[RMDB]
RNA sequence: GGGAACGACUCGAGUAGAGUCGAAAAAAAAAGAUAUGGACCGUUCACGUAGUUACACAGAGGGAGGCUCGGAAACGAGCCUCCUACCCACCUGUGUAGGUUCGAAGUGACGGUCCUAAGUCAAAAACAAUGUAUAGAUGUUCGCAUCUAUACAUUGAAAAGAAACAACAACAACAAC
Reactivity to DMS in 0.01 (KOAc 150mM, MgCl2 10mM, bicine 150mM(pH8.5), 24C), signal-to-noise 5, nucleotides 027 to 126: a040a060a070a070a060g000a040u000a060u010g000g000a010c000c010g010u010u000c010a010c000g020u010a190g010u000u000a010c000a000c010a000g010a120g020g000g010a040g030g020c000u000c010g010g000a010a010a020c010g020a010g030c000c000u000c010c000u000a010c020c020c080a300c040c000u000g000u000g000u000a010g000g010u010u020c170g030a090a260g000u000g000a030c000g000g000u000c000c000u000a000a010g000u020c010a090a060a080a100a160
Reactivity to 2A3 in 0.01 (KOAc 150mM, MgCl2 10mM, bicine 150mM(pH8.5), 24C), signal-to-noise 2, nucleotides 027 to 126: a010a000a000a000a010g020a000u010a000u030g020g000a000c010c020g080u300u200c120a010c040g240u270a170g030u060u000a000c000a010c000a010g020a020g000g000g000a010g020g000c000u010c000g000g010a010a040a000c020g000a000g040c010c000u000c000c010u000a000c000c000c000a000c000c000u000g010u020g000u000a000g030g140u300u300c120g040a110a010g000u000g000a000c000g020g010u010c000c000u000a010a010g010u000c020a000a080a050a000a120
Chemical mapping of a 177-nucleotide RNA with DMS and 2A3. The RNA was probed in 150 mM KOAc, 10 mM MgCl2 and 150 mM bicine (pH 8.5) at 24 C. The data come from the RNA Mapping Database (RMDB), library TTRDES.